Chemical mapping of a 207-nucleotide RNA with 2A3. 2A3 is a SHAPE reagent: it acylates the 2'-hydroxyl of flexible nucleotides of all four kinds. Reactivities are rounded to 0.1 and cut off at 0 and 3. Values cover nucleotides 27 to 156.
RNA sequence: GGGAACGACUCGAGUAGAGUCGAAAACGAGGAUGGGAAAGCAUGCGUAGAGGAUGGGAAAGCAUGCUAACGUACGGAAACCAUCCGCCGGUGGUGCAUGCGAAAGGAUGGUCGGAUGGGAAAGCAUGCCCACGGCGUCGGAUGGUGCGCCACUGCAUAUUGACGCCCUGUUCGCAGGGCGUCAAUAAAAAGAAACAACAACAACAAC
Reactivity to 2A3 in 0.01 (KOAc 150mM, MgCl2 10mM, bicine 150mM(pH8.5), 24C), signal-to-noise 1, nucleotides 027 to 156: c080g010a000g060g000a090u070g120g000g000a000a180a000g000c000a020u000g000c080g120u220a090g050a140g160g070a260u180g040g030g020a150a000a000g040c000a000u000g000c000u000a110a000c030g020u100a020c000g010g030a030a200a000c000c000a000u000c000c000g030c030c000g010g000u040g030g050u150g010c000a000u020g020c000g070a140a050a050g120g050a040u120g000g100u150c090g040g010a170u150g070g000g030a030a030a030g050c050a000u020g000c000c040c020a000c010g030g010c030g090u210c010g020g000a000u020g000g010u020g030c010g000c040c020a120c040u000g000c050a030

Source: RMDB library OK3TST, as collected in RNAgym.